[RMDB]
RNA sequence: GGGAACGACUCGAGUAGAGUCGAAAAAGAAAACUACGACCGUAUUGAUAUUGAAACUGUCUUGAUCGAGAGGCGUAUAAACUUGAAAAAGUUGCUUCUUGAAGAAGCAGAGCUAGAACGACGAGAGGUAUCAUCACCGUUUCGACGGUGAUGAUACAAAAGAAACAACAACAACAAC
Reactivity to DMS in 0.01 (KOAc 150mM, MgCl2 10mM, bicine 150mM(pH8.5), 24C), signal-to-noise 2, nucleotides 027 to 126: a080g000a060a040a110a090c060u000a150c070g000a100c090c010g000u020a130u020u030g010a160u000a040u050u010g010a140a130a070c020u000g000u070c000u000u010g020a190u020c010g000a040g020a070g000g030c000g000u020a080u050a070a030a030c020u000u000g000a130a070a120a000a010g000u000u000g020c010u000u000c010u000u010g000a040a040g000a040a000g000c010a050g000a090g030c050u000a110g000a130a060c030g000a070c050g020a100g000a190g000
Reactivity to 2A3 in 0.01 (KOAc 150mM, MgCl2 10mM, bicine 150mM(pH8.5), 24C), signal-to-noise 3, nucleotides 027 to 126: a000g050a000a010a000a000c040u050a030c000g110a070c090c060g020u080a130u170u090g090a030u060a150u190u120g060a040a050a020c060u050g080u120c030u040u110g090a100u030c010g000a000g000a000g010g050c020g080u080a110u240a150a030a030c040u030u040g050a120a000a000a000a000g010u030u080g000c010u000u000c010u020u090g040a060a040g020a040a000g000c010a000g000a010g110c080u030a010g020a130a020c030g060a010c040g000a030g000a030g250

Annotation:
Structure probing data (DMS and 2A3) for a 177-nucleotide construct. The DMS profile rests on 2,640 reads. The data come from the RNA Mapping Database (RMDB), library OK1LIB. DMS adducts were read by reverse transcription with MarathonRT. The reactions ran in a buffer of 150 mM KOAc, 10 mM MgCl2 and 150 mM bicine (pH 8.5), at 24 C.